[RMDB]
RNA sequence: GGGAACGACUCGAGUAGAGUCGAAAAAAGGCACAAAGCAAUGCAAACUAGGCUUUAUUGUGAUAUGCCCACCAAUUCAAUAAAGUCAGCCCAACUCAGACUAUAUCGGGUGGAUGCAUGAAGUAUACCAGUAGGUCAAAUUCGUUUGACCUACUGGAAAAGAAACAACAACAACAAC
Reactivity to 2A3 in 0.01 (KOAc 150mM, MgCl2 10mM, bicine 150mM(pH8.5), 24C), signal-to-noise 3, nucleotides 027 to 126: a040a000g120g020c080a070c110a070a150a020g000c030a070a040u040g000c000a010a040a130c040u070a060g000g000c000u040u020u000a010u010u030g030u000g020a040u050a020u270g060c000c000c000a030c010c010a040a040u130u040c020a010a010u010a030a010a000g010u000c020a020g030c000c000c000a040a050c050u070c120a060g060a190c070u100a050u050a060u300c050g020g000g000u020g060g000a040u090g020c000a050u070g040a080a030g080u100a110u050a220
Reactivity to DMS in 0.01 (KOAc 150mM, MgCl2 10mM, bicine 150mM(pH8.5), 24C), signal-to-noise 3, nucleotides 027 to 126: a110a040g030g010c010a080c080a050a080a170g030c050a120a050u000g020c040a070a080a160c110u000a100g000g010c010u000u000u000a020u000u010g000u010g000a060u000a070u000g000c040c010c020a110c040c060a080a080u010u000c000a000a020u000a000a000a030g010u000c010a090g030c050c030c030a070a070c160u020c080a080g010a100c110u000a100u000a300u000c090g020g030g040u000g010g000a130u020g000c020a030u000g010a080a170g000u000a110u010a140
Structure probing data (2A3 and DMS) for a 177-nucleotide construct. Conditions: 150 mM KOAc, 10 mM MgCl2 and 150 mM bicine (pH 8.5), 24 C. As a SHAPE reagent, 2A3 marks flexible, mostly unpaired nucleotides at the ribose 2'-OH. The data come from the RNA Mapping Database (RMDB), library OK2TRN.